[RMDB]
Chemical mapping of a 177-nucleotide RNA with 2A3 and DMS.
In probing experiments dimethyl sulfate is read out at A N1 and C N3, which are open when not base-paired.
For DMS the reverse transcriptase was MarathonRT.
The DMS profile rests on 56,394 reads.
It was measured as part of the RMDB library OK1LIB.

RNA sequence: GGGAACGACUCGAGUAGAGUCGAAAAGGUCAGGUUAGGGUAUUCGUUAAACCAUGCGCACUAGCAGGAAUUAAAUCCGUCGACAGUCGAGCGUAACUCUGGCUGGCGGAUAGAUUCUUUAUUUGCCACGUCUUAUAAUUUUCGAAUUAUAAGACGUAAAAGAAACAACAACAACAAC
Reactivity to 2A3 in 0.01 (KOAc 150mM, MgCl2 10mM, bicine 150mM(pH8.5), 24C), signal-to-noise 9, nucleotides 027 to 126: g050g020u080c030a010g010g060u060u100a050g050g010g030u080a130u060u120c030g020u040u110a030a030a050c020c010a040u070g020c040g000c030a040c070u050a060g030c040a020g020g030a010a010u040u050a060a110a120u000c000c000g010u010c030g130a070c040a010g010u020c010g020a010g010c140g110u110a180a140c010u000c050u080g030g000c020u010g010g000c000g000g000a000u010a020g030a010u010u000c000u020u160u070a210u060u120u080g050c020c020
Reactivity to DMS in 0.01 (KOAc 150mM, MgCl2 10mM, bicine 150mM(pH8.5), 24C), signal-to-noise 9, nucleotides 027 to 126: g000g000u010c030a030g010g010u010u010a080g000g010g020u010a070u020u010c080g020u010u020a070a100a100c070c040a060u010g000c050g010c060a070c090u010a080g010c100a070g010g000a020a020u000u010a040a110a090u000c000c000g010u010c080g010a130c110a020g020u000c040g010a040g010c220g010u050a120a170c030u000c010u040g030g010c030u010g000g000c010g000g000a010u000a070g010a030u000u000c010u000u010u020a080u020u020u020g010c040c100